RNA sequence: GGGAACGACUCGAGUAGAGUCGAAAAGAUAUGGAUCAGCGAUUACCAGGAGGACCUACCCACCUCAUCCCUCGGAAACGAGGGAAUGAGAGGGUCUACCCACCCUGGUAAUCGCUGAUCCUAAGUCGGAAGAUGUUGAGUUCGCUCAACAUCUUCCAAAAGAAACAACAACAACAAC
Reactivity to DMS in 0.01 (KOAc 150mM, MgCl2 10mM, bicine 150mM(pH8.5), 24C), signal-to-noise 2, nucleotides 027 to 126: g000a030u010a300u010g020g000a040u000c000a000g000c000g030a030u010u000a010c040c010a000g000g000a300g000g000a030c060c290u010a100c040c070c010a300c220c000u010c000a000u000c000c010c000u000c010g000g010a120a030a270c040g020a010g010g000g000a040a020u000g000a030g010a300g020g000g000u000c090u000a070c090c010c070a300c210c020c010u000g050g020u010a000a000u000c030g000c000u000g010a020u000c000c000u000a020a160g000u000c030